[RMDB]
RNA sequence: GGGAACGACUCGAGUAGAGUCGAAAAACUGAUACCUUACGAGGUAUCAGAAUGACUUCGUGGUAGAGCGCCACGAACGGAAAAUAAAGAAAGCUCGAUUGAAACGCACCGUGUACGCACGAUGCGAAAAAGUCGAUCCAGUUCGCUGGAUCGACAAGCACUCUAAAGGGUUCGCCCUUUAGAGUGCAAAAGAAACAACAACAACAAC
Reactivity to 2A3 in 0.01 (KOAc 150mM, MgCl2 10mM, bicine 150mM(pH8.5), 24C), signal-to-noise 2, nucleotides 027 to 156: a000c000u000g010a010u000a000c000c000u080u020a050c260g110a020g000g000u020a000u000c000a000g010a030a040u130g030a050c070u010u010c020g000u000g010g030u010a170g030a000g000c010g010c000c000a000c000g000a000a000c010g050g040a060a050a000a030u040a040a020a030g160a040a040a010g000c010u010c010g130a170u060u180g060a110a070a020c000g010c000a000c000c000g000u010g000u080a020c160g000c070a000c000g010a010u000g000c010g030a080a030a010a000a000g000u010c000g000a000u000c000c000a000g030u110u080c190g070c140u000g010g000a010u000c000g000a000c010a000a010

Chemical mapping of a 207-nucleotide RNA with 2A3. 2A3 adducts were read by reverse transcription with SuperScript II with manganese. It was measured as part of the RMDB library M2RFPK.